Notes: An RNA of 207 nucleotides, treated with 2A3 and DMS and read out base by base. For DMS the reverse transcriptase was MarathonRT. It was measured as part of the RMDB library OK3TST. Reactivities are given for positions 27 through 156. For DMS, 2,459 sequencing reads were counted. The RNA was probed in 150 mM KOAc, 10 mM MgCl2 and 150 mM bicine (pH 8.5) at 24 C. Values are in units of 0.01, from 0 to 300, in steps of 10.

RNA sequence: GGGAACGACUCGAGUAGAGUCGAAAAUGCCGGCGAAGAAGGUGAGCGCAGUGCUGUGUGGCAGCAGAGGUCCUUAGGACGAGGAACAGCGGGACGAGGAAGGGCAGACUGGUGAAAUCGCAAACUGGGCGUCUGUUCCGGCACCGGACCCCUGUUAGUGAUUAAUGGUAUUCGUACCAUUAAUCACAAAAGAAACAACAACAACAAC
Reactivity to 2A3 in 0.01 (KOAc 150mM, MgCl2 10mM, bicine 150mM(pH8.5), 24C), signal-to-noise 3, nucleotides 027 to 156: u100g020c000c010g010g040c090g010a080a050g050a040a020g110g000u070g020a050g070c040g000c040a030g040u030g050c050u030g050u030g030u100g130g000c020a020g010c020a000g040a040g060g040u050c010c010u030u080a070g000g070a020c070g000a050g000g030a040a060c010a010g050c040g030g020g000a010c030g010a040g020g030a020a030g040g000g000c030a020g020a010c020u030g030g020u040g060a040a050a060u170c080g000c080a080a050a010c050u020g000g050g000c060g030u060c000u000g020u080u090c010c000g020g010c060a030c030c010g030g030a060c010c030c010c000u030g000u060u090a010
Reactivity to DMS in 0.01 (KOAc 150mM, MgCl2 10mM, bicine 150mM(pH8.5), 24C), signal-to-noise 1, nucleotides 027 to 156: u000g010c080c020g020g000c100g030a080a130g030a050a090g010g020u000g010a100g040c040g030c080a120g010u000g010c040u010g070u000g040u000g020g060c020a100g000c010a080g020a080g000g020u000c000c050u000u000a110g000g010a080c030g000a030g010g030a070a130c000a110g040c100g040g010g000a100c040g020a090g020g010a040a020g000g030g010c060a090g020a090c010u010g000g060u000g020a070a070a120u000c070g000c010a060a070a110c070u000g020g020g000c160g020u010c060u000g010u000u000c030c010g020g030c020a050c060c010g020g010a110c000c000c000c000u010g010u000u000a100